[RMDB]
RNA sequence: GGGAACGACUCGAGUAGAGUCGAAAAAAAGAUAUGGAGAUCUCGUAACAGCAACAGCCACAGCGUAACAUCCGUCGGAAACGACGGUGGCUGUGGACAUGCUGGAGAAGAGAUCUCCUAAGUCAAACAUGGAAGUUAUGUUCGCAUAACUUCCAUGAAAAGAAACAACAACAACAAC
Reactivity to 2A3 in 0.01 (KOAc 150mM, MgCl2 10mM, bicine 150mM(pH8.5), 24C), signal-to-noise 3, nucleotides 027 to 126: a000a000a030g110a050u110a060u130g010g000a010g000a010u000c010u000c010g000u000a040a020c000a010g010c020a010a050c040a270g090c010c000a000c000a010g010c030g040u070a050a020c020a300u150c010c000g000u000c010g010g030a120a060a060c010g000a000c000g000g010u000g000g000c000u000g000u000g000g010a000c000a010u010g000c000u010g020g000a010g010a000a000g000a000g000a010u000c000u000c000c000u000a000a010g010u010c000a020a010a060
Reactivity to DMS in 0.01 (KOAc 150mM, MgCl2 10mM, bicine 150mM(pH8.5), 24C), signal-to-noise 6, nucleotides 027 to 126: a090a070a100g000a020u000a300u000g000g010a010g010a010u000c000u000c000g010u000a150a300c010a000g010c010a030a060c300a160g020c000c000a000c000a000g010c000g030u000a040a050c160a030u020c000c000g000u000c010g010g000a120a100a170c010g000a010c010g010g010u000g000g000c000u000g030u000g010g000a010c080a100u000g010c000u000g010g010a040g000a120a170g000a010g010a010u000c000u010c000c000u000a010a050g010u000c020a110a140a240